[RMDB]
RNA sequence: GGGAACGACUCGAGUAGAGUCGAAAAGGGGUCAUGGGAGGUCCGUGUGGAGCGAAGAACUACACUGAAGCCUCCACGGUGUAGGGAGCUCCACCGGACCGACGAUCAUGACGGAGGCACCCAAACUGUCAACCAUGGUUCGCCAUGGUUGACAGAACAAUGCUCUGGAGUUCGCUCCAGAGCAUUGAAAAGAAACAACAACAACAAC
Reactivity to 2A3 in 0.01 (KOAc 150mM, MgCl2 10mM, bicine 150mM(pH8.5), 24C), signal-to-noise 1, nucleotides 027 to 156: g050g000g090g000u010c000a000u000g000g010g000a030g000g000u040c020c010g160u190g000u000g140g010a000g000c020g070a200a000g010a020a000c000u000a010c010a000c010u060g030a090a020g010c020c010u000c020c030a000c020g010g020u000g010u000a010g000g020g020a010g010c000u000c000c010a000c000c000g000g000a000c000c000g000a000c000g010a010u000c000a000u000g000a000c010g010g000a020g020g000c000a040c000c000c000a050a100a090c010u010g000u000c010a000a000c010c000a000u000g010g080u020u120c280g000c110c000a010u010g000g000u010u010g000a000c000a010g010a000a000
This 207-nucleotide RNA was probed chemically with 2A3. The data come from the RNA Mapping Database (RMDB), library RNAMAK. The 2A3 profile rests on 1,641 reads.